[RMDB]
RNA sequence: GGGAACGACUCGAGUAGAGUCGAAAAAUGACAUUGUUACCGUUACCGUUAUUACUGUUAAUAGUAUUGCUGUUGGAAGAAUUGUUAACGGCCUGAUUGCUAAUACUAUUCGCUGCAGCUGCUGCAAGGAUGCGAUACGUUUCGACGUAUCGCAUCCAAAAGAAACAACAACAACAAC
Reactivity to 2A3 in 0.01 (KOAc 150mM, MgCl2 10mM, bicine 150mM(pH8.5), 24C), signal-to-noise 1, nucleotides 027 to 126: a000u080g050a020c000a060u130u160g150u200u000a110c000c000g000u000u030a000c000c060g120u150u150a240u300u080a180c030u040g110u300u000a130a000u000a060g000u040a000u100u040g000c000u000g000u020u150g020g000a020a020g000a300a300u070u000g130u090u000a000a050c040g000g000c000c000u030g210a000u090u070g000c030u120a000a000u090a100c020u000a000u050u000c000g030c000u000g000c050a000g000c080u160g060c020u010g080c080a100a100